Structure probing data (2A3 and DMS) for a 177-nucleotide construct.
2A3 adducts were read by reverse transcription with SuperScript II with manganese.
The 2A3 profile rests on 1,050 reads.
RNA sequence: GGGAACGACUCGAGUAGAGUCGAAAAGAACGCCUGAUUCGUCAGGAAGCAGGUAUGGUAUUCCAACAGUUUUAUCUUUUCCCGCAUUUGACUGCGUUGGAAAACGUGGCAUUUGGCCCCAUCCGUGGGACCAAGUAACGUUCGCGUUACUUGGUCCAAAAGAAACAACAACAACAAC
Reactivity to 2A3 in 0.01 (KOAc 150mM, MgCl2 10mM, bicine 150mM(pH8.5), 24C), signal-to-noise 1, nucleotides 027 to 126: g000a040a000c010g000c020c010u010g000a020u000u040c040g180u190c160a080g300g000a000a020g030c020a010g090g000u110a070u190g000g050u100a130u080u090c010c000a040a030c020a110g030u160u000u000u140a090u030c000u000u040u020u020c040c000c010g020c020a030u050u000u120g160a160c010u000g020c030g020u040u050g050g000a010a130a000a000c010g010u060g000g050c010a010u030u000u060g020g000c000c030c000c040a050u110c000c050g130u090g070
Reactivity to DMS in 0.01 (KOAc 150mM, MgCl2 10mM, bicine 150mM(pH8.5), 24C), signal-to-noise 1, nucleotides 027 to 126: g000a080a100c090g010c000c000u000g000a070u010u010c090g040u000c260a120g000g000a010a020g020c000a000g000g010u000a120u020g010g020u000a090u000u030c030c030a020a040c130a090g000u000u000u000u000a070u010c070u000u000u000u000c010c000c000g040c160a060u020u000u000g000a100c030u000g000c030g000u010u010g010g000a110a020a020a010c020g020u000g010g000c020a060u000u000u000g000g000c000c000c000c000a080u010c120c190g000u000g010